Description:
Chemical mapping of a 177-nucleotide RNA with 2A3 and DMS. For 2A3, 2,202 sequencing reads were counted. DMS (dimethyl sulfate) methylates the pairing face of unpaired adenines and cytosines.
[RMDB]
RNA sequence: GGGAACGACUCGAGUAGAGUCGAAAAGAUAUGGAUAUAUCGUUUGGAGAUUGCAUACAUCGGAAACGAUGUAUGAUCUAUGAAGAACGAGUAUAUCCUAAGUCAAACAUGUGCUUCGGCACAUGAAGGAAGUACACUUCUUCGGAAGUGUACUUCCAAAAGAAACAACAACAACAAC
Reactivity to 2A3 in 0.01 (KOAc 150mM, MgCl2 10mM, bicine 150mM(pH8.5), 24C), signal-to-noise 2, nucleotides 027 to 126: g000a000u080a030u210g000g000a000u010a010u010a020u070c000g010u000u000u010g150g050a130g030a100u110u220g040c020a000u000a060c000a020u010c000g050g080a030a040a020c000g000a020u010g000u050a000u010g010a000u020c020u010a300u130g070a080a100g010a000a000c020g030a000g240u000a010u000a010u020c010c000u010a100a010g050u070c080a110a070a030c010a010u000g010u000g000c030u050u060c300g180g000c010a000c010a010u010g000a020a010
Reactivity to DMS in 0.01 (KOAc 150mM, MgCl2 10mM, bicine 150mM(pH8.5), 24C), signal-to-noise 2, nucleotides 027 to 126: g040a080u000a300u000g000g010a030u000a000u000a000u030c010g010u010u010u010g000g000a150g010a000u010u000g010c000a000u000a010c010a000u000c000g000g020a130a070a260c000g000a010u000g000u000a000u000g020a010u010c010u010a250u020g030a300a240g000a010a030c000g000a080g050u000a010u000a010u000c040c000u010a030a090g000u040c080a160a160a300c000a000u000g010u000g020c000u000u030c240g050g000c000a000c000a000u000g010a080a110
The RNA was probed in 150 mM KOAc, 10 mM MgCl2 and 150 mM bicine (pH 8.5) at 24 C.